Source: RMDB library OK2TRN, as collected in RNAgym. This 177-nucleotide RNA was probed chemically with 2A3 and DMS.
RNA sequence: GGGAACGACUCGAGUAGAGUCGAAAAGGUGAUCAGCGACUUCAAGGCCAACAAGACGCCGGGCGAGAGCUUCGUGGAGUACGCCGACCGGGUGGGCGCCGACCGCUUCGUGCCGGACACCGUGCUGCCAUUUUGACUAUUUCGAUAGUCAAAAUGGAAAAGAAACAACAACAACAAC
Reactivity to 2A3 in 0.01 (KOAc 150mM, MgCl2 10mM, bicine 150mM(pH8.5), 24C), signal-to-noise 1, nucleotides 027 to 126: g050g020u050g030a110u070c030a010g040c010g060a040c010u050u020c090a070a070g040g000c030c020a080a070c030a080a130g120a060c060g010c010c000g000g000g010c030g010a130g000a020g050c020u070u060c060g110u080g030g010a030g020u050a060c040g000c030c010g050a090c040c020g030g030g030u070g020g020g010c030g010c030c020g050a090c020c030g030c020u100u140c070g040u070g110c010c000g000g020a020c020a020c030c010g020u070g020c030u070g010
Reactivity to DMS in 0.01 (KOAc 150mM, MgCl2 10mM, bicine 150mM(pH8.5), 24C), signal-to-noise 7, nucleotides 027 to 126: g010g010u000g010a090u000c050a060g000c030g000a070c060u000u000c070a100a120g020g010c020c050a070a100c130a080a150g010a110c130g010c050c020g010g000g010c040g000a110g000a110g010c030u000u000c120g020u000g000g010a080g010u000a060c070g010c030c020g010a080c060c040g000g010g020u000g000g000g010c040g000c050c040g010a070c070c060g000c060u000u000c050g010u010g010c020c010g000g000a130c070a090c070c030g020u000g000c060u010g000